This 177-nucleotide RNA was probed chemically with 2A3 and DMS.
The DMS profile rests on 4,003 reads.
The reactions ran in a buffer of 150 mM KOAc, 10 mM MgCl2 and 150 mM bicine (pH 8.5), at 24 C.
It was measured as part of the RMDB library OK1LIB.
Values cover nucleotides 27 to 126.
High DMS reactivity at an A or C suggests that its Watson-Crick edge is free.
RNA sequence: GGGAACGACUCGAGUAGAGUCGAAAAAGGCCAGCGUCUUCUGGGAUGCAAAGGCGCGCAGUCGCUUGAUAACAUACUGACGCUGCGCCUGCUGCUCUGCGACCGAUAGAGGUGACGCCGUAGGAAACGAUUAGGUGGGGUUCGCCCCACCUAAUCGAAAAGAAACAACAACAACAAC
Reactivity to 2A3 in 0.01 (KOAc 150mM, MgCl2 10mM, bicine 150mM(pH8.5), 24C), signal-to-noise 3, nucleotides 027 to 126: a000g040g000c000c000a000g000c010g040u000c020u200u050c050u080g050g070g080a060u150g010c050a110a070a070g060g000c020g000c030g000c040a060g160u260c030g030c000u110u030g040a100u120a290a000c030a020u100a080c030u070g020a010c000g010c010u030g000c060g000c010c010u020g000c010u020g000c000u000c010u020g040c000g040a030c000c050g070a120u070a090g170a030g010g050u070g040a050c040g010c000c000g010u040a050g000g060a010a150a000
Reactivity to DMS in 0.01 (KOAc 150mM, MgCl2 10mM, bicine 150mM(pH8.5), 24C), signal-to-noise 3, nucleotides 027 to 126: a060g020g010c040c040a020g000c000g010u010c000u020u040c170u000g010g000g050a050u010g000c120a010a140a080g020g000c050g020c010g010c210a130g020u040c000g030c030u010u000g000a140u040a140a250c080a070u000a050c080u010g000a020c010g000c010u000g000c170g030c020c000u000g020c080u020g000c010u020c050u020g030c040g000a020c030c000g000a120u030a090g000a080g000g040u010g000a190c100g010c000c050g000u050a100g000g000a100a160a080